[RMDB]
The data come from the RNA Mapping Database (RMDB), libraries RFM100 and RFMREP. An RNA of 177 nucleotides, treated with 2A3 and DMS and read out base by base. The 2A3 profile rests on 778 reads. For 2A3 the reverse transcriptase was SuperScript II with manganese.
RNA sequence: GGGAACGACUCGAGUAGAGUCGAAAAGCGUGGAUAAUAAUCGGGCAUAAGCAUAGUACCGAAGAUAUGGAAUUGAAAAAUUGGUAGGGGAGCAUUCUAGUUGCACUGAAGGCGUAUGGCGAUGUAUGUACAUUUCGAACUUCGGUUCGAAAUGUACAAAAGAAACAACAACAACAAC
Reactivity to 2A3 in 0.01 (KOAc 150mM, MgCl2 10mM, bicine 150mM(pH8.5), 24C), signal-to-noise 2, nucleotides 027 to 126: g000c000g010u070g050g000a080u050a100a040u160a090a080u160c020g000g050g000c040a060u060a140a040g020c040a090u120a090g000u050a200c000c020g030a050a030g040a010u040a080u020g230g030a010a080u020u090g110a100a050a000a060a250u040u130g000g040u050a040g000g000g020g030a000g000c000a010u040u030c020u000a080g060u010u140g000c040a010c020u020g030a080a000g000g000c000g000u010a030u050g020g000c030g000a000u040g000u110a060u060
Reactivity to DMS in 0.01 (KOAc 150mM, MgCl2 10mM, bicine 150mM(pH8.5), 24C), signal-to-noise 1, nucleotides 027 to 126: g040c040g000u000g000g000a060u000a040a080u010a050a090u010c060g000g010g000c100a110u000a050a170g000c110a030u020a110g000u000a050c020c010g000a090a090g010a190u010a060u000g020g010a010a030u000u000g000a050a020a070a060a110u020u000g010g050u000a030g000g000g000g010a020g000c020a030u010u020c080u000a060g030u030u010g010c030a080c070u000g050a020a080g000g000c020g000u020a050u020g010g030c060g000a050u010g000u000a100u000